[RMDB]
An RNA of 177 nucleotides, treated with 2A3 and DMS and read out base by base. For DMS the reverse transcriptase was MarathonRT. Reactivities are given for positions 27 through 126. It was measured as part of the RMDB library M2PK50.
RNA sequence: GGGAACGACUCGAGUAGAGUCGAAAAUUCCCCUAUUUCGAUAGGGGAACACCUGCGGGCGGCUCGCAGUUCCGACUUCCUCCUCCUCUGAGUGAAAGGGCGAUAGGCCUCGGUUCGCCGAGGCCAACUAUCUUGUAUCAUUCGUGAUACAAGAUAGAAAAGAAACAACAACAACAAC
Reactivity to 2A3 in 0.01 (KOAc 150mM, MgCl2 10mM, bicine 150mM(pH8.5), 24C), signal-to-noise 4, nucleotides 027 to 126: u010u010c000c000c000c000u010a010u020u110u070c180g100a010u010a000g000g000g000g010a000a000c020a040c020c020u030g030c060g030g060g010c050g020g010c040u020c030g010c010a010g010u070u020c030c010g060a070c040u070u030c010c000u020c000c000u010c000c010u040c040u070g030a040g040u080g020a120a040a030g030g020g010c050g030a030u110a160g000g000c000c000u000c000g010g020u020u030c170g000c040c010g000a000g000g000c000c000a000a000
Reactivity to DMS in 0.01 (KOAc 150mM, MgCl2 10mM, bicine 150mM(pH8.5), 24C), signal-to-noise 9, nucleotides 027 to 126: u000u000c000c000c000c000u000a000u000u000u010c150g010a030u000a000g000g000g010g010a010a020c110a070c090c010u000g010c050g010g000g010c080g000g010c030u000c030g010c040a070g000u000u000c020c010g010a100c070u000u000c020c010u000c020c020u000c010c020u000c040u000g000a100g010u000g000a060a090a090g010g000g010c090g010a120u010a100g010g010c000c000u000c010g000g000u000u010c210g020c010c000g010a010g010g010c000c000a010a050